[RMDB]
RNA sequence: GGGAACGACUCGAGUAGAGUCGAAAAUAAAAAACGAACAAUUGGCACUGGCACUGCGCCAAACCUGACCAAUACUAGAAGUGUUGGCGCGGCGCAUCCCCCCCAGUGGCGCGUCGAUAAAGGUGCUCUAAUUGGUUCACUUCGGUGAACCAAUUAGAAAAGAAACAACAACAACAAC
Reactivity to DMS in 0.01 (KOAc 150mM, MgCl2 10mM, bicine 150mM(pH8.5), 24C), signal-to-noise 1, nucleotides 027 to 126: u030a040a040a030a090a090a180c040g010a050a000c130a020a160u080u060g000g000c000a000c050u020g000g000c040a070c070u030g000c000g000c000c020a000a060a060c150c040u000g010a260c040c030a090a100u090a090c170u020a160g000a150a110g090u000g000u010u020g000g010c010g010c100g000g000c050g010c010a070u000c010c000c000c000c000c000c000a030g000u070g030g000c000g010c020g000u000c000g000a050u010a090a090a040g000g000u000g000c000u000
Reactivity to 2A3 in 0.01 (KOAc 150mM, MgCl2 10mM, bicine 150mM(pH8.5), 24C), signal-to-noise 3, nucleotides 027 to 126: u300a020a040a000a000a000a010c110g040a100a050c080a120a080u040u040g120g000c010a000c070u000g010g000c000a000c130u080g030c010g010c000c000a030a030a040c010c040u060g100a140c010c100a010a070u070a090c040u050a030g170a300a020g110u040g020u010u000g000g010c000g030c060g040g000c000g000c000a100u180c000c000c000c000c000c000c000a000g020u050g120g000c040g010c010g040u030c000g010a010u130a070a110a080g020g020u060g000c000u000

About this RNA:
An RNA of 177 nucleotides, treated with DMS and 2A3 and read out base by base. 2A3 adducts were read by reverse transcription with SuperScript II with manganese. Values cover nucleotides 27 to 126. For DMS, 1,127 sequencing reads were counted. High DMS reactivity at an A or C suggests that its Watson-Crick edge is free. Values are in units of 0.01, from 0 to 300, in steps of 10. Conditions: 150 mM KOAc, 10 mM MgCl2 and 150 mM bicine (pH 8.5), 24 C. For 2A3, 1,386 sequencing reads were counted.